RNA sequence: GGGAACGACUCGAGUAGAGUCGAAAAGUCUCGCCGAACUCGCAGCAGCGUCGCCGACAGACGUCGCGCCGUCGGCCGACGCUAUCGCGUCGUUCGCCGCCGCCCACGAGUCACACGAGGCGACGCCGAGGAUGGCAUUAUUCGUAAUGCCAUCCUCAAAAGAAACAACAACAACAAC
Reactivity to 2A3 in 0.01 (KOAc 150mM, MgCl2 10mM, bicine 150mM(pH8.5), 24C), signal-to-noise 5, nucleotides 027 to 126: g040u020c020u020c050g040c040c020g040a090a070c030u030c080g050c030a130g000c040a010g010c050g000u020c000g000c020c010g030a040c020a040g030a030c020g220u100c050g050c120g030c030c010g040u030c000g010g020c030c040g010a000c020g020c000u040a040u080c040g000c000g020u040c050g000u040u080c040g010c020c000g030c000c010g010c010c030c000a120c040g040a050g070u070c060a060c010a010c220g050a050g010g000c000g010a010c030g020c040c040
Reactivity to DMS in 0.01 (KOAc 150mM, MgCl2 10mM, bicine 150mM(pH8.5), 24C), signal-to-noise 6, nucleotides 027 to 126: g010u000c040u000c030g030c100c050g000a090a070c050u000c040g010c120a140g030c170a100g000c000g010u000c000g010c030c000g010a130c080a060g000a010c010g020u000c130g010c160g010c190c040g010u000c010g010g000c020c020g020a010c000g010c020u010a020u000c160g000c050g020u010c090g000u010u010c090g020c030c010g000c050c010g010c070c050c030a090c030g000a130g010u010c070a060c160a090c050g000a300g000g000c000g000a030c030g020c100c130